Chemical mapping of a 177-nucleotide RNA with 2A3 and DMS. The RNA was probed in 150 mM KOAc, 10 mM MgCl2 and 150 mM bicine (pH 8.5) at 24 C. For 2A3 the reverse transcriptase was SuperScript II with manganese.
[RMDB]
RNA sequence: GGGAACGACUCGAGUAGAGUCGAAAAAAUAAACAACUUGUGAAGCCAGCAUAAACGGAUAGCCGUAACUGGGCGGCAGAAAAGCUGUCAGGGUAACGCUGGUGGCGGUUAAUUCACUAAUUUGCCACUCAUGGAGUGGUUUCGACCACUCCAUGAGAAAAGAAACAACAACAACAAC
Reactivity to 2A3 in 0.01 (KOAc 150mM, MgCl2 10mM, bicine 150mM(pH8.5), 24C), signal-to-noise 1, nucleotides 027 to 126: a000a000u220a030a060a000c030a040a040c070u210u140g030u080g100a090a020g040c080c000a000g000c040a070u130a130a060a000c010g010g010a100u100a210g250c000c000g060u030a000a000c000u070g030g040g010c000g060g010c000a000g190a140a190a040a010g030c010u010g000u000c030a000g070g000g040u070a060a060c080g000c080u000g010g030u010g000g000c010g030g030u090u060a090a130u120u080c010a010c110u060a040a170u130u080u250g040c010c030a030
Reactivity to DMS in 0.01 (KOAc 150mM, MgCl2 10mM, bicine 150mM(pH8.5), 24C), signal-to-noise 1, nucleotides 027 to 126: a130a020u000a060a100a090c100a110a040c190u000u010g030u010g000a210a150g020c010c020a000g010c040a160u020a030a040a030c050g010g020a120u010a080g020c020c020g000u010a050a100c060u000g000g030g010c050g000g030c020a040g000a040a030a090a110g020c000u000g020u000c000a010g000g000g000u000a120a060c140g000c020u010g040g050u010g000g060c010g000g000u000u000a010a120u000u020c130a000c080u000a020a040u000u000u020g050c050c020a220